The record gives the reactivity of an RNA of 177 nucleotides to DMS and 2A3.
[RMDB]
RNA sequence: GGGAACGACUCGAGUAGAGUCGAAAAAAAUAUCUGGCGUGGCGACUUGCUGGUAGAUAAUCGCCCGUACCAACAGGUGCGGCGGUAAUUCAUGGCCGAUAAGGUGGCGCGGGCAGAGUUCGGUACAUCGUAUAGACUUGUUCGCAAGUCUAUACGAAAAAGAAACAACAACAACAAC
Reactivity to DMS in 0.01 (KOAc 150mM, MgCl2 10mM, bicine 150mM(pH8.5), 24C), signal-to-noise 4, nucleotides 027 to 126: a070a050a070u010a060u000c030u000g010g010c010g020u000g010g000c030g010a030c020u000u000g010c050u000g010g000u010a060g010a050u010a100a050u000c040g010c090c040c040g020u000a020c000c000a110a090c300a150g010g000u000g010c000g000g010c000g010g010u010a060a080u010u000c080a060u010g000g000c000c020g010a050u010a050a060g000g010u000g000g020c020g010c010g000g010g010c030a060g000a040g000u000u000c050g000g000u000a090c200a110
Reactivity to 2A3 in 0.01 (KOAc 150mM, MgCl2 10mM, bicine 150mM(pH8.5), 24C), signal-to-noise 2, nucleotides 027 to 126: a000a000a010u180a040u010c020u010g050g000c020g020u020g010g020c030g040a050c010u040u060g000c020u100g010g060u040a030g040a080u100a040a030u020c020g050c070c010c010g000u010a010c000c010a100a240c090a210g000g050u010g030c010g000g000c000g000g060u010a040a060u130u060c080a080u140g120g000c000c020g040a080u040a150a070g050g020u020g020g030c030g000c010g000g010g010c040a020g030a000g040u080u120c030g020g070u090a060c040a090
For 2A3 the reverse transcriptase was SuperScript II with manganese.